[RMDB]
RNA sequence: GGGAACGACUCGAGUAGAGUCGAAAACAGGGCCCACAGAUGGAGCAUUGGGUUCGGAAGUGGGAGGUCCAGGUUUUAAUCCCAGUUCUACUACUCAAUGACUGGAUGACUUUGGUUGAUUCCCCCACCCUAAAUGGGGAUUCGUCCCCAUUUAGGGAAAAGAAACAACAACAACAAC
Reactivity to DMS in 0.01 (KOAc 150mM, MgCl2 10mM, bicine 150mM(pH8.5), 24C), signal-to-noise 2, nucleotides 027 to 126: c050a100g020g000g000c000c000c080a070c080a030g000a190u020g000g020a080g000c020a060u010u000g000g000g000u000u000c080g000g010a080a060g000u020g000g010g000a070g010g000u020c110c070a090g010g010u000u010u020u000a080a160u000c010c000c010a060g010u000u000c060u000a100c130u010a020c000u000c030a050a050u010g000a080c040u000g010g020a140u000g000a040c070u000u010u010g000g010u020u000g000a230u010u000c010c010c000c120c130a130
Reactivity to 2A3 in 0.01 (KOAc 150mM, MgCl2 10mM, bicine 150mM(pH8.5), 24C), signal-to-noise 2, nucleotides 027 to 126: c000a010g010g000g050c000c080c020a010c050a030g080a100u220g040g100a040g090c030a030u050u090g140g040g030u130u110c030g050g010a020a020g180u080g010g070g030a030g000g040u030c040c020a070g070g000u110u060u060u300a030a080u020c010c000c000a010g000u000u000c020u060a150c030u010a030c020u030c010a000a080u080g020a110c030u070g040g030a070u020g000a030c030u060u050u160g050g040u010u160g090a300u050u080c020c000c040c000c000a040
Chemical mapping of a 177-nucleotide RNA with DMS and 2A3. The DMS profile rests on 1,702 reads. For 2A3, 1,016 sequencing reads were counted. The reactions ran in a buffer of 150 mM KOAc, 10 mM MgCl2 and 150 mM bicine (pH 8.5), at 24 C. In probing experiments dimethyl sulfate is read out at A N1 and C N3, which are open when not base-paired.